[RMDB]
RNA sequence: GGGAACGACUCGAGUAGAGUCGAAAAGAAAGAGGCUAAACCGUGUCAACUAUGAUGGCCUUACAAAGCUCGACGAAAAGAAACACUUGAUACUACCGAAAGCCAGAGCUGCUGCAUACGGAAGAAAGGAGUAGGAUAGUUUCGACUAUCCUACUCCAAAAGAAACAACAACAACAAC
Reactivity to DMS in 0.01 (KOAc 150mM, MgCl2 10mM, bicine 150mM(pH8.5), 24C), signal-to-noise 4, nucleotides 027 to 126: g000a070a110a100g000a050g020g000c030u000a030a130a130c130c090g000u000g000u010c020a100a090c140u050a080u050g020a050u000g000g020c040c020u020u000a060c110a050a070a050g000c000u000c040g020a090c080g000a070a080a110a100g000a080a060a070c090a080c100u000u000g010a110u010a040c080u010a080c070c030g000a040a070a150g000c030c030a130g010a100g000c020u010g000c020u010g010c080a030u010a060c100g000g020a050a090g010a050a060a080
Reactivity to 2A3 in 0.01 (KOAc 150mM, MgCl2 10mM, bicine 150mM(pH8.5), 24C), signal-to-noise 6, nucleotides 027 to 126: g120a010a090a010g090a000g000g010c030u050a030a040a080c030c030g030u040g020u040c040a060a060c090u060a100u140g040a030u060g030g030c000c000u020u020a060c060a050a100a010g020c000u030c020g080a080c040g100a060a040a070a060g110a030a110a010c070a020c030u060u080g030a030u070a110c030u050a080c020c030g110a120a010a000g020c020c010a030g020a000g040c030u030g000c000u020g010c000a050u020a100c030g060g000a030a020g080a060a100a030

Notes
The data come from the RNA Mapping Database (RMDB), library OK1LIB. Chemical mapping of a 177-nucleotide RNA with DMS and 2A3. The RNA was probed in 150 mM KOAc, 10 mM MgCl2 and 150 mM bicine (pH 8.5) at 24 C. The 2A3 profile rests on 7,944 reads.